Chemical mapping of a 177-nucleotide RNA with 2A3 and DMS. Conditions: 150 mM KOAc, 10 mM MgCl2 and 150 mM bicine (pH 8.5), 24 C. For 2A3 the reverse transcriptase was SuperScript II with manganese. Values cover nucleotides 27 to 126. It was measured as part of the RMDB library OK2TST.
[RMDB]
RNA sequence: GGGAACGACUCGAGUAGAGUCGAAAACGCUUUACUGGGAUAAUCCUGAAACCAAUCCACCGGCUGAGUUGCGAGCUGAUGUCUCAUUAUCUGUUGCGGAUGAUUAUGUUUUGCCACCAGAGCUCAGAGAUGUAGUGGAUUUCGAUCCACUACAUCUAAAAGAAACAACAACAACAAC
Reactivity to 2A3 in 0.01 (KOAc 150mM, MgCl2 10mM, bicine 150mM(pH8.5), 24C), signal-to-noise 2, nucleotides 027 to 126: c020g010c000u100u050u080a090c040u060g050g020g000a060u070a100a020u100c000c020u010g010a050a020a020c030c020a060a050u030c030c010a040c000c000g040g000c030u040g020a100g080u010u060g070c010g030a010g000c040u050g020a020u070g100u000c020u020c040a040u080u080a080u100c010u010g110u150u060g120c050g000g070a080u050g010a040u070u120a050u110g080u000u110u090u100g040c000c000a040c000c020a070g020a050g060c020u050c070a040g010
Reactivity to DMS in 0.01 (KOAc 150mM, MgCl2 10mM, bicine 150mM(pH8.5), 24C), signal-to-noise 4, nucleotides 027 to 126: c200g020c050u000u000u010a070c040u000g000g010g020a090u000a100a130u000c020c020u000g020a090a070a090c090c070a050a100u010c040c060a080c050c050g010g010c030u000g000a060g020u000u000g000c070g010a090g010c020u010g010a060u000g010u010c050u000c050a070u000u000a030u020c060u010g000u000u000g000c060g000g010a060u010g000a060u000u010a050u010g010u000u000u000u010g000c040c010a070c050c040a060g000a090g000c050u000c080a100g000